[RMDB]
RNA sequence: GGGAACGACUCGAGUAGAGUCGAAAACUUAUGGGAGAGUUGAUCACCUCUCAGCCCCUCCACCUUGGGGUGCCCUAUCCGAGCACUGCAGUUUCGGUAGAAAGGCUAAGAACCUCGCAAUGAGGUAGUAUACCAAUUGGUUCGCCAAUUGGUAUACAAAAGAAACAACAACAACAAC
Reactivity to DMS in 0.01 (KOAc 150mM, MgCl2 10mM, bicine 150mM(pH8.5), 24C), signal-to-noise 4, nucleotides 027 to 126: c060u000u010a040u010g000g000g000a010g000a110g020u000u010g010a130u010c190a160c030c010u000c010u000c000a040g000c000c000c000c000u010c150c140a100c140c100u010u000g000g010g010g010u000g000c000c010c000u000a130u000c040c010g000a030g020c040a070c190u010g020c180a120g000u000u000u000c010g000g000u000a020g000a060a080a130g000g000c010u010a020a090g010a100a060c000c000u000c000g010c180a080a080u010g010a010g000g010u000a050
Reactivity to 2A3 in 0.01 (KOAc 150mM, MgCl2 10mM, bicine 150mM(pH8.5), 24C), signal-to-noise 5, nucleotides 027 to 126: c010u040u020a010u050g000g010g010a020g020a090g010u030u100g090a120u090c060a010c010c010u000c000u000c010a010g000c000c020c000c000u050c050c050a210c030c030u050u080g000g000g000g020u010g000c000c010c000u020a010u000c000c000g010a000g020c020a060c210u300g040c120a100g030u110u290u070c000g000g000u000a000g010a000a010a010g000g000c000u010a040a030g020a090a040c010c000u010c010g020c150a170a220u290g000a000g000g010u010a030
An RNA of 177 nucleotides, treated with DMS and 2A3 and read out base by base. High DMS reactivity at an A or C suggests that its Watson-Crick edge is free. It was measured as part of the RMDB library VIROID. 2A3 adducts were read by reverse transcription with SuperScript II with manganese. Values cover nucleotides 27 to 126. For DMS, 3,888 sequencing reads were counted.